[RMDB]
RNA sequence: GGGAACGACUCGAGUAGAGUCGAAAACAUAAGACCUCAGAGCUAAUGAGCCACAUAACUACCCAAGGUGAAAGCUCCUUCUCUCGCAAUGUGUAACUCAUGAUUCUCAUGACCCCUGGUUGGAGAGCGCGCUAACACGCCUUCGGGCGUGUUAGAAGCAUGUAGAAGGCUUCGGCCUUCUACAUGCAAAAGAAACAACAACAACAAC
Reactivity to DMS in 0.01 (KOAc 150mM, MgCl2 10mM, bicine 150mM(pH8.5), 24C), signal-to-noise 2, nucleotides 027 to 156: c070a160u010a030a060g020a080c010c040u000c070a080g010a150g000c130u010a100a080u000g020a050g050c020c020a070c050a080u000a130a060c040u010a080c050c060c030a090a120g050g030u000g000a110a150a130g000c050u010c020c020u000u020c010u010c030u000c030g030c030a110a070u000g030u010g010u000a060a060c040u010c030a060u000g000a190u000u000c090u000c010a090u000g010a130c030c010c000c030u000g020g070u000u000g000g000a100g020a110g020c070g010c060g030c020u000a000a020c010a000c000g000c000c000u010u010c300g020g030g030c000g050u000g000u000u000a000g020a070a120
Reactivity to 2A3 in 0.01 (KOAc 150mM, MgCl2 10mM, bicine 150mM(pH8.5), 24C), signal-to-noise 3, nucleotides 027 to 156: c030a020u190a080a050g050a050c000c070u060c080a020g010a020g050c020u110a110a030u090g030a020g050c070c020a040c020a070u230a140a080c080u100a090c050c040c070a060a040g060g000u060g040a100a040a050g030c020u050c010c000u100u070c030u000c010u030c050g070c090a050a100u080g000u010g020u090a050a020c020u000c030a010u040g020a100u270u050c050u020c040a050u070g040a080c000c000c000c020u020g040g000u040u050g020g010a060g000a010g020c090g000c000g000c040u010a000a000c000a000c000g000c010c010u020u030c090g060g000g000c010g000u000g000u000u000a000g000a000a000
Background
Structure probing data (DMS and 2A3) for a 207-nucleotide construct. The data come from the RNA Mapping Database (RMDB), library M2RFPK. DMS adducts were read by reverse transcription with MarathonRT. For DMS, 2,557 sequencing reads were counted.